[RMDB]
RNA sequence: GGGAACGACUCGAGUAGAGUCGAAAAGAUAUGGAGCCGUGGAUGAGCUUUGAUCUCGGAAACGAGGGAGCUCGCCACCGGCUCCUAAGUCAAAACGUUUCGAUGUACUUCGGUACAUCGAAACGAACUGAAGACUUAAGUUCGCUUAAGUCUUCAGAAAAGAAACAACAACAACAAC
Reactivity to DMS in 0.01 (KOAc 150mM, MgCl2 10mM, bicine 150mM(pH8.5), 24C), signal-to-noise 2, nucleotides 027 to 126: g000a060u000a300u010g010g000a020g020c000c000g050u010g000g000a060u010g000a020g010c010u000u010u010g000a070u000c010u010c000g000g000a130a090a220c010g020a030g000g000g000a010g020c000u000c010g000c020c010a020c080c140g070g010c000u000c000c000u010a010a060g000u000c050a050a080a100a150c010g000u000u000u000c000g000a010u000g010u000a010c000u000u020c200g020g000u010a000c000a000u000c000g000a000a000a000c000g010a030a080
Reactivity to 2A3 in 0.01 (KOAc 150mM, MgCl2 10mM, bicine 150mM(pH8.5), 24C), signal-to-noise 4, nucleotides 027 to 126: g020a000u070a040u170g020g000a000g000c010c020g000u020g080g060a300u150g010a050g000c030u290u250u140g080a120u090c000u000c020g000g000a110a090a040c010g000a000g000g000g010a010g010c020u000c010g030c000c010a010c020c020g000g010c000u010c020c000u000a000a000g000u000c010a000a000a110a130c010g000u000u010u020c000g000a010u000g000u000a010c000u020u120c300g140g000u010a000c000a010u000c000g000a000a000a000c000g000a010a010
Notes
An RNA of 177 nucleotides, treated with DMS and 2A3 and read out base by base. Values cover nucleotides 27 to 126. Source: RMDB library TTRDEL, as collected in RNAgym. The 2A3 profile rests on 6,929 reads. The DMS profile rests on 4,400 reads.